[RMDB]
RNA sequence: GGGAACGACUCGAGUAGAGUCGAAAAUACAAUAGCGUAGGGAACCAAGCUAAGAGCUUGGAAGUCCAACGGUAGAGGGCUUGGUUCGCAGCUGCUCUAGAAGAGGUCCCACUCCCUACGCCGCAAAACCACUAUGGGUGUUCGCACCCAUAGUGGUAAAAGAAACAACAACAACAAC
Reactivity to DMS in 0.01 (KOAc 150mM, MgCl2 10mM, bicine 150mM(pH8.5), 24C), signal-to-noise 2, nucleotides 027 to 126: u010a090c260a110a060u000a070g030c000g030u020a020g000g000g020a040a260c000c000a000a000g030c000u010a150a110g020a080g000c010u010u000g000g000a100a010g010u020c000c040a030a170c240g010g010u000a010g000a040g050g010g000c000u000u000g070g000u000u000c180g020c060a040g020c040u000g040c000u000c020u000a030g000a060a030g010a300g000g000u000c050c030c070a210c210u010c000c000c000u000a000c010g070c030c250g000c270a020a000a070
Reactivity to 2A3 in 0.01 (KOAc 150mM, MgCl2 10mM, bicine 150mM(pH8.5), 24C), signal-to-noise 2, nucleotides 027 to 126: u260a020c110a080a280u070a160g000c010g000u000a020g020g010g000a030a130c010c000a000a020g000c000u130a300a050g120a010g170c000u020u010g030g020a020a010g020u040c030c000a020a020c020g000g100u030a020g050a030g050g000g000c030u080u100g150g000u260u110c130g030c120a020g010c020u200g080c000u030c000u010a070g020a250a010g000a070g000g020u000c010c010c000a010c050u080c000c000c020u000a000c010g000c010c000g010c020a060a070a020
This 177-nucleotide RNA was probed chemically with DMS and 2A3. DMS adducts were read by reverse transcription with MarathonRT. 2A3 adducts were read by reverse transcription with SuperScript II with manganese. For 2A3, 1,072 sequencing reads were counted.